[RMDB]
RNA sequence: GGGAACGACUCGAGUAGAGUCGAAAAUUGUCACGCAACAGACAGGGACCGCACACUGUCACAUCACGUUCCCGUGUCUGAACGACGAGGUCAACGGGUGCACGUACAUCCUCUCCACCAACCUACACGGGUGAGCGGGGCGGCCGCGCGGAGGAGAUACUCAUUUUCGAUUCGUCGAAAAUGAGUAAAAAGAAACAACAACAACAAC
Reactivity to 2A3 in 0.01 (KOAc 150mM, MgCl2 10mM, bicine 150mM(pH8.5), 24C), signal-to-noise 2, nucleotides 027 to 156: u090u120g060u030c010a030c090g060c060a100a070c040a090g010a020c020a020g020g030g040a060c040c020g040c020a040c000a010c050u060g030u150c060a030c020a140u160c070a060c140g030u020u000c000c000c010g040u030g010u000c010u030g040a130a030c040g020a000c000g010a020g030g030u040c040a060a040c110g010g000g000u050g000c050a020c160g100u090a040c010a030u000c020c000u040c000u030c020c010a030c000c020a030a090c000c030u120a120c150a040c070g030g030g000u020g020a000g020c030g000g000g040g000c020g020g030c020c020g040c020g000c000g010g010a030g010g010a060g040a060
Reactivity to DMS in 0.01 (KOAc 150mM, MgCl2 10mM, bicine 150mM(pH8.5), 24C), signal-to-noise 1, nucleotides 027 to 156: u000u000g010u000c000a050c120g040c050a120a130c050a090g010a020c010a070g010g000g020a090c040c040g090c130a100c070a160c030u000g000u000c090a070c100a070u010c040a070c000g010u000u010c030c000c010g000u000g050u000c040u010g000a130a120c070g020a060c040g000a130g040g040u000c030a050a050c040g000g000g000u000g040c020a090c220g000u000a010c060a050u010c010c050u050c000u020c000c000a080c070c040a050a080c060c010u000a040c070a080c000g000g010g020u000g010a070g100c010g030g010g030g060c110g010g040c030c070g010c030g000c080g000g000a140g020g010a120g000a140